[RMDB]
RNA sequence: GGGAACGACUCGAGUAGAGUCGAAAACAGUCAAAGUGAAGGCGGGCCAGACCAUCGCCGCAUUCUACCAGAGCACCGUCAUGAUCUUUGGCACGAUGGCUCGCUACAUCCACAGAGUUAGGGAAAACGAUUUUAUCCAGUUCGCUGGAUAAAAUCGAAAAGAAACAACAACAACAAC
Reactivity to DMS in 0.01 (KOAc 150mM, MgCl2 10mM, bicine 150mM(pH8.5), 24C), signal-to-noise 3, nucleotides 027 to 126: c090a140g030u000c040a100a110a090g020u000g020a140a110g010g000c020g010g000g010c010c050a120g010a130c090c070a070u020c080g030c050c050g010c120a050u000u000c080u010a090c080c050a070g000a080g010c080a050c030c030g020u000c070a070u020g000a070u000c000u000u000u000g020g000c040a070c150g000a070u000g000g020c010u010c040g020c020u010a050c070a090u010c030c030a050c070a090g000a080g000u010u000a020g000g000g000a080a070a080a240
Reactivity to 2A3 in 0.01 (KOAc 150mM, MgCl2 10mM, bicine 150mM(pH8.5), 24C), signal-to-noise 2, nucleotides 027 to 126: c040a040g070u080c040a070a050a060g020u040g050a060a040g030g000c010g000g000g090c040c000a020g020a070c030c010a110u090c050g000c040c020g010c020a010u050u060c030u050a040c000c020a040g000a030g110c050a020c080c040g090u060c050a240u050g040a050u070c020u080u030u020g000g040c040a000c060g040a050u070g020g000c010u000c010g000c000u020a030c000a080u020c030c010a000c000a090g110a000g070u090u090a050g040g010g050a050a020a000a060